[RMDB]
RNA sequence: GGGAACGACUCGAGUAGAGUCGAAAAGAUAUGGAGUUUACACCGAACUUACAGGCGUUGAAAGUAGCUUCUCGGAAACGAGAAGCUACUGGAGCCUGUAUUACUAAGUGUACGGACUCCUAAGUCACGUAAUCCGUAGGUUCGCCUACGGAUUACGAAAAGAAACAACAACAACAAC
Reactivity to DMS in 0.01 (KOAc 150mM, MgCl2 10mM, bicine 150mM(pH8.5), 24C), signal-to-noise 1, nucleotides 027 to 126: g000a030u030a300u020g000g000a020g020u000u000u000a000c050a030c020c000g010a300a210c190u000u000a000c000a000g000g030c000g040u060u000g020a180a070a020g010u000a000g030c000u000u000c000u000c000g000g000a080a130a300c000g000a010g000a000a010g020c000u000a000c000u000g000g060a110g060c000c000u000g010u000a000u000u010a000c170u000a130a120g010u000g000u030a000c300g040g000a000c000u010c000c000u100a060a130g000u000c070a250